[RMDB]
Structure probing data (DMS and 2A3) for a 207-nucleotide construct. The RNA was probed in 150 mM KOAc, 10 mM MgCl2 and 150 mM bicine (pH 8.5) at 24 C. For 2A3, 2,400 sequencing reads were counted. It was measured as part of the RMDB library OK3TST. Reactivities are given for positions 27 through 156.
RNA sequence: GGGAACGACUCGAGUAGAGUCGAAAAGUGGUGAGCACCUGUCGUCCCAGCUGGUUGAAAGGUUGAGGCAUGAGAAUUGUUUGAACUUGGGAGGCAGAGGUUGCAGUGAGCCGAGGUCAUGCCACUGCACUCCAGCAUGGGUGACAGAGCUAGACUAGCUAAUAAUACCAUUCGUGGUAUUAUUAGCAAAAGAAACAACAACAACAAC
Reactivity to DMS in 0.01 (KOAc 150mM, MgCl2 10mM, bicine 150mM(pH8.5), 24C), signal-to-noise 2, nucleotides 027 to 156: g010u000g030g030u000g010a130g020c020a070c060c010u000g000u000c000g010u000c010c010c000a120g010c060u000g000g030u000u000g010a060a060a040g030g010u000u000g010a100g010g040c020a030u000g010a150g010a100a120u020u000g020u010u020u010g030a030a060c050u000u000g030g030g020a120g020g080c060a080g010a060g010g040u000u000g030c000a070g030u010g010a120g020c070c020g000a170g010g000u000c050a100u010g010c000c000a060c060u000g010c030a050c060u000c010c010a090g000c010a090u000g030g000g000u000g020a070c010a050g000a080g030c030u010a140g000a070c080u000a200
Reactivity to 2A3 in 0.01 (KOAc 150mM, MgCl2 10mM, bicine 150mM(pH8.5), 24C), signal-to-noise 4, nucleotides 027 to 156: g110u070g000g040u070g040a020g000c020a070c110c000u000g000u000c040g090u080c000c000c000a000g000c010u020g080g010u220u090g120a230a110a040g040g010u050u080g040a050g010g020c020a020u040g020a000g050a130a140u160u070g110u110u100u150g030a060a020c030u070u070g020g020g000a050g010g040c040a020g020a040g080g020u130u040g010c000a010g020u020g040a030g010c040c020g020a030g060g040u050c050a050u090g000c000c000a040c010u010g000c020a040c030u010c000c000a030g000c070a140u040g000g000g010u000g000a000c000a000g030a000g010c000u050a020g040a080c030u030a030